[RMDB]
RNA sequence: GGGAACGACUCGAGUAGAGUCGAAAAGAGAGGGUAACCACCGGCGCGCGUCACUGAUAUAUCCACCGGGGGGUAAGGGGAGAAAAGCAUACAGCGCGACGAAGUUAGCACGCUGCCCCGUAAGGCUUGAAGAGUGUAGUGUUCGCACUACACUCAACAGAAGUGUAGGUUUCGACCUACACUUCUGAAAAGAAACAACAACAACAAC
Reactivity to DMS in 0.01 (KOAc 150mM, MgCl2 10mM, bicine 150mM(pH8.5), 24C), signal-to-noise 1, nucleotides 027 to 156: g000a120g000a130g010g000g000u000a070a150c030c010a040c040c020g010g020c010g220c020g010c050g000u000c070a070c120u000g000a170u000a100u000a120u010c040c040a080c020c030g020g030g000g020g020g040u020a040a060g000g020g010g000a140g000a030a050a090a080g050c040a060u010a100c060a020g020c020g020c010g030a070c020g000a080a040g020u010u040a110g030c020a060c000g050c000u020g000c000c010c020c020g000u000a040a090g030g000c030u000u000g020a130a170g010a050g040u000g020u020a010g010u000g050u000u000c290g020c050a020c000u000a000c000a020c000u020c010a010a150
Reactivity to 2A3 in 0.01 (KOAc 150mM, MgCl2 10mM, bicine 150mM(pH8.5), 24C), signal-to-noise 2, nucleotides 027 to 156: g070a000g000a030g000g020g040u050a080a040c060c030a050c080c010g030g000c000g000c010g010c010g050u010c020a030c050u020g030a050u050a030u040a060u240c010c040a100c030c070g020g020g040g000g000g030u050a090a050g010g010g000g040a050g040a020a110a000a000g050c010a030u090a160c060a020g000c010g000c000g020a010c010g010a050a000g030u040u090a020g070c030a020c060g040c020u030g000c000c000c000c030g020u030a060a010g020g010c040u090u110g110a130a090g010a030g000u000g000u000a000g000u010g030u020u080c160g000c040a000c000u000a000c010a000c000u010c000a000a000